Overview
An RNA of 177 nucleotides, treated with 2A3 and DMS and read out base by base. The RNA was probed in 150 mM KOAc, 10 mM MgCl2 and 150 mM bicine (pH 8.5) at 24 C. Reactivities are given for positions 27 through 126. Source: RMDB library OK1LIB, as collected in RNAgym. For DMS, 14,930 sequencing reads were counted. For 2A3 the reverse transcriptase was SuperScript II with manganese.

RNA sequence: GGGAACGACUCGAGUAGAGUCGAAAAGAAAAAGAGCACGAGAGACUAAUGGAUAUCGAAGGCCUAAGAUAUCGAUCUCGAGUAGUGGAUACGAAGGCCUAAGUAUCGACUACGAGUGCUCGAAAAAGGGAUAAUAUACCUUCGGGUAUAUUAUCCCAAAAGAAACAACAACAACAAC
Reactivity to 2A3 in 0.01 (KOAc 150mM, MgCl2 10mM, bicine 150mM(pH8.5), 24C), signal-to-noise 4, nucleotides 027 to 126: g110a000a090a020a000a010g010a000g000c000a000c000g060a050g000a000g010a070c010u160a130a070u150g170g000a010u010a010u080c040g060a170a020g050g000c000c000u030a040a010g030a040u010a020u010c010g020a070u010c000u000c010g030a020g000u050a010g010u010g160g010a010u010a030c040g010a120a050g020g000c010c000u030a080a000g000u000a000u010c030g050a020c010u060a010c000g040a020g020u000g000c000u000c000g010a000a000a000a020a000
Reactivity to DMS in 0.01 (KOAc 150mM, MgCl2 10mM, bicine 150mM(pH8.5), 24C), signal-to-noise 6, nucleotides 027 to 126: g010a080a090a090a120a120g020a010g000c000a010c000g000a240g010a030g000a100c220u040a080a070u060g000g010a020u000a000u010c010g010a230a080g000g000c020c020u000a100a210g000a040u000a000u010c000g000a080u030c000u000c010g010a170g000u020a000g010u000g000g000a000u000a000c000g000a270a070g000g000c010c010u010a040a200g000u000a000u000c000g000a060c000u000a010c010g010a190g010u000g010c000u000c010g000a020a030a040a100a060